The record gives the reactivity of an RNA of 207 nucleotides to 2A3. Values are in units of 0.01, from 0 to 300, in steps of 10. The 2A3 profile rests on 617 reads. Source: RMDB library OK3TST, as collected in RNAgym. Conditions: 150 mM KOAc, 10 mM MgCl2 and 150 mM bicine (pH 8.5), 24 C. For 2A3 the reverse transcriptase was SuperScript II with manganese.

RNA sequence: GGGAACGACUCGAGUAGAGUCGAAAAGGCAUAAACGACGGCAGCUUUAGGAAUUUUUAUUUUUGUGCCAGCUUCAUACAUUCUACCAUCACAUGCAUAUGAUUCGUGUGCAGUAUCAUAUAUAAAAUACUCUUUGUAACCUUUAACUAUUUUUGUGCAGAUGAUGCGAAUUCGUUCGCAUCAUCUGAAAAGAAACAACAACAACAAC
Reactivity to 2A3 in 0.01 (KOAc 150mM, MgCl2 10mM, bicine 150mM(pH8.5), 24C), signal-to-noise 2, nucleotides 027 to 156: g010g020c010a010u030a060a130a020c030g060a020c050g090g000c020a010g010c080u170u220u210a110g030g050a110a120u090u080u100u050u110a130u100u150u010u100u170g040u030g000c020c000a020g040c040u060u110c010a010u020a190c000a030u020u020c010u080a040c050c030a030u040c040a060c000a060u050g140c020a010u030a030u110g120a170u040u090c060g060u030g020u030g110c040a010g040u030a010u040c000a000u050a000u050a000u090a250a010a120a020u080a060c010u000c000u030u110u120g030u040a040a070c000c000u040u190u090a030a010c030u050a190u190u300u060u070u120g060u040g000